[RMDB]
RNA sequence: GGGAACGACUCGAGUAGAGUCGAAAAAUGCACGUCGUGCCCUUCAGGCCCGAGACCAGGCACCACGACCGCACCACCGCCUCGUCCGGGGAGAGGCUGGAGGUGUCUGCGGGAGGCAGGAGAAACGUGUUUAUGACGACUUCGGUCGUCAUAAACAAAAAGAAACAACAACAACAAC
Reactivity to DMS in 0.01 (KOAc 150mM, MgCl2 10mM, bicine 150mM(pH8.5), 24C), signal-to-noise 2, nucleotides 027 to 126: a090u000g010c060a040c130g020u010c040g010u000g010c020c020c090u010u020c080a130g010g010c050c010c050g040a230g030a080c270c060a040g020g000c030a100c030c010a110c140g020a080c050c150g000c050a120c020c030a080c050c060g020c000c080u000c050g000u000c140c070g000g020g000g040a260g000a010g000g020c040u000g030g000a050g020g000u000g000u000c030u010g000c030g000g000g000a100g000g000c060a030g000g010a060g000a030a100a080c120g000